[RMDB]
RNA sequence: GGGAACGACUCGAGUAGAGUCGAAAACCCGUCCUCGGACGGGAGGUAAGGGUGAAAUGGUGCGGUAAGAGCGCACCGCGCUGGUGGCAACAUCAGUGGCAGGGUAAACCCCACCCGGAGCAAGACCAGCCCAAGAGGGAUUCGUCCCUCUUGGGCUAAAAGAAACAACAACAACAAC
Reactivity to DMS in 0.01 (KOAc 150mM, MgCl2 10mM, bicine 150mM(pH8.5), 24C), signal-to-noise 1, nucleotides 027 to 126: c000c000c000g000u000c040c010u000c300g060g000a000c000g000g020g000a010g030g000u010a180a130g010g000g000u000g000a090a030a080u040g000g000u000g000c000g000g010u010a120a140g010a300g120c010g010c000a000c000c050g010c000g010c000u000g060g030u000g000g000c200a270a210c000a000u010c020a000g000u000g010g000c010a110g020g010g020u000a030a180a150c010c000c010c020a060c000c010c000g000g010a150g010c080a040a020g050a130c060c020
Reactivity to 2A3 in 0.01 (KOAc 150mM, MgCl2 10mM, bicine 150mM(pH8.5), 24C), signal-to-noise 1, nucleotides 027 to 126: c000c000c000g000u000c030c010u060c140g290g000a030c000g000g020g000a050g010g000u020a000a090g000g030g000u010g100a030a030a230u020g000g030u000g070c060g000g000u010a000a000g000a000g020c000g000c020a000c020c000g040c010g030c040u010g020g020u000g030g000c000a050a000c000a100u000c000a000g000u000g030g010c000a000g080g000g010u180a120a110a110c000c020c000c000a000c030c000c000g000g010a130g040c060a100a000g010a010c000c010
The record gives the reactivity of an RNA of 177 nucleotides to DMS and 2A3. Reactivities are rounded to 0.1 and cut off at 0 and 3. The 2A3 profile rests on 632 reads. The reactions ran in a buffer of 150 mM KOAc, 10 mM MgCl2 and 150 mM bicine (pH 8.5), at 24 C. The data come from the RNA Mapping Database (RMDB), libraries RFM100 and RFMREP. 2A3 adducts were read by reverse transcription with SuperScript II with manganese. For DMS the reverse transcriptase was MarathonRT.